[RMDB]
RNA sequence: GGGAACGACUCGAGUAGAGUCGAAAAAGACACAAGGUCAACGAGUUCCGCGAGGGCAAUGAUGCCGGUAUCACUGCCCUUGCCAGCAUGAAGCAGCUGGCGGUGACCAGUGCCGCCCAACAGCGCAAAUUAUGCAUUAGUUCGCUAAUGCAUAAUUAAAAGAAACAACAACAACAAC
Reactivity to 2A3 in 0.01 (KOAc 150mM, MgCl2 10mM, bicine 150mM(pH8.5), 24C), signal-to-noise 8, nucleotides 027 to 126: a010g060a020c030a010c040a100a190g020g000u010c010a020a020c020g040a040g110u150u070c070c030g030c020g020a000g010g010g000c000a010a020u020g010a010u040g130c170c100g100g020u140a010u020c000a000c000u000g000c000c000c000u000u020g000c000c000a000g000c010a040u190g110a140a020g050c100a020g000c030u010g010g000c020g000g010u010g000a020c010c000a000g010u020g010c010c030g030c010c010c010a030a050c030a030g130c030g000c110a030
Reactivity to DMS in 0.01 (KOAc 150mM, MgCl2 10mM, bicine 150mM(pH8.5), 24C), signal-to-noise 9, nucleotides 027 to 126: a120g010a050c020a020c020a120a110g020g000u000c000a030a060c040g010a170g010u000u000c080c060g020c040g000a020g000g010g010c000a010a020u000g010a020u000g020c130c130g010g010u000a140u000c010a010c030u000g010c000c000c010u000u000g010c000c020a010g010c010a100u010g010a110a130g020c170a130g010c010u000g000g010c010g010g010u000g000a020c010c010a210g010u000g010c020c020g010c010c010c010a080a080c150a050g010c110g010c160a080
Annotation: Conditions: 150 mM KOAc, 10 mM MgCl2 and 150 mM bicine (pH 8.5), 24 C. Chemical mapping of a 177-nucleotide RNA with 2A3 and DMS. DMS (dimethyl sulfate) methylates the pairing face of unpaired adenines and cytosines. 2A3 adducts were read by reverse transcription with SuperScript II with manganese.